An RNA of 177 nucleotides, treated with 2A3 and DMS and read out base by base. The 2A3 profile rests on 3,335 reads. The RNA was probed in 150 mM KOAc, 10 mM MgCl2 and 150 mM bicine (pH 8.5) at 24 C. The DMS profile rests on 5,698 reads.
[RMDB]
RNA sequence: GGGAACGACUCGAGUAGAGUCGAAAACUGCCUGGUCUUGCAGAUGCCCACGAUGGUGGCCUCUGACACGACGACUGGGCAGUGCCGGUGACGCUUAUGGCACUGCGGCGUGGUAGGGGCAGAGGGGCUAAGAGUGGCUGUUCGCAGCCACUCUUAGAAAAGAAACAACAACAACAAC
Reactivity to 2A3 in 0.01 (KOAc 150mM, MgCl2 10mM, bicine 150mM(pH8.5), 24C), signal-to-noise 4, nucleotides 027 to 126: c000u010g020c000c000u020g030g000u000c020u010u100g000c000a010g020a050u050g010c000c090c010a030c050g290a230u300g170g090u060g030g010c030c000u020c010u000g140a170c010a020c210g210a020c050g010a020c020u050g020g030g010c000a000g000u000g010c010c030g030g060u090g050a040c030g030c120u230u200a150u300g040g010c030a030c070u100g070c030g030g000c030g020u060g020g040u180a030g000g010g030g000c040a010g050a040g060g000g010g000
Reactivity to DMS in 0.01 (KOAc 150mM, MgCl2 10mM, bicine 150mM(pH8.5), 24C), signal-to-noise 4, nucleotides 027 to 126: c010u000g010c010c010u010g010g010u000c010u010u010g000c000a020g000a040u000g000c110c000c020a100c090g010a160u020g020g030u000g010g010c040c080u000c000u000g000a100c040a110c300g020a070c180g000a050c060u000g010g000g000c010a000g000u000g020c040c040g000g020u010g010a080c110g000c160u000u000a110u010g010g010c020a040c020u010g020c060g010g000c060g040u000g000g000u010a060g000g000g000g000c100a090g010a120g010g010g000g010